Chemical mapping of a 177-nucleotide RNA with DMS.
DMS adducts were read by reverse transcription with MarathonRT.
Reactivities are rounded to 0.1 and cut off at 0 and 3.
[RMDB]
RNA sequence: GGGAACGACUCGAGUAGAGUCGAAAAGAUAUGGAGUAAGUAAAGUACCGAUACAACUGCUUUGAUCGCAGGGUUCGGAAACGAACCUGCGGGAGCAGGUAUCGGUACUUUACUUACUCCUAAGUCAGAUAUGUUCAUCCUUCGGGAUGAACAUAUCAAAAGAAACAACAACAACAAC
Reactivity to DMS in 0.01 (KOAc 150mM, MgCl2 10mM, bicine 150mM(pH8.5), 24C), signal-to-noise 1, nucleotides 027 to 126: g010a060u010a300u000g000g020a030g010u000a010a000g000u000a010a020a010g000u000a000c020c000g000a020u000a020c000a140a240c030u010g020c000u000u000u010g010a120u020c010g010c010a020g010g010g010u010u000c060g010g000a060a080a130c020g000a020a070c000c000u000g000c000g010g010g000a000g010c000a020g020g000u000a000u000c000g020g000u000a010c000u000u000u000a000c000u000u000a000c000u000c000c000u000a000a060g000u020c080a130